RNA sequence: GGGAACGACUCGAGUAGAGUCGAAAAACUGCCAUACGUGGCAGAAACACGCCUUACCAGGACUAAACAGCGUGUCUAAAAAACAGUCCUUCAUACCUGAUCUGGAGGGUAGAUCAGUAAUACUAAAAAAAUCGGGUGAAGUUCGCUUCACCCGAAACAAUUCUUUUAGCUUCGGCUAAAAGAAUUGAAAAGAAACAACAACAACAAC
Reactivity to 2A3 in 0.01 (KOAc 150mM, MgCl2 10mM, bicine 150mM(pH8.5), 24C), signal-to-noise 4, nucleotides 027 to 156: a000c000u000g000c010c000a030u040a090c170g090u020g000g010c000a000g010a010a010a000c000a000c000g010c000c000u020u070a010c020c050a010g000g010a000c000u050a160a030a000c010a010g000c010g010u000g020u040c110u030a010a010a010a000a000a000c030a000g000u000c030c000u020u110c070a090u080a110c010c010u000g000a010u010c010u030g070g040a080g070g070g040u060a010g010a000u010c010a000g020u030a040a070u080a190c090u160a040a030a020a030a020a030a110u020c000g000g000g000u000g000a000a010g010u040u110c140g040c080u000u010c000a000c000c010c000g000a000a000a000
Reactivity to DMS in 0.01 (KOAc 150mM, MgCl2 10mM, bicine 150mM(pH8.5), 24C), signal-to-noise 2, nucleotides 027 to 156: a140c000u000g010c000c000a100u000a040c150g030u010g040g060c000a000g000a190a220a030c010a010c020g030c000c040u020u000a070c080c070a070g010g020a060c020u020a110a080a100c080a050g010c030g020u010g000u000c070u010a010a020a030a200a030a030c070a100g000u000c000c010u010u010c070a120u010a110c120c000u000g010a020u000c040u000g020g020a120g050g000g000u000a010g020a050u010c010a040g020u020a100a100u000a210c070u000a000a000a080a110a100a080a150u000c000g030g010g030u010g000a020a040g020u010u000c300g020c020u000u000c000a010c010c000c000g010a000a020a040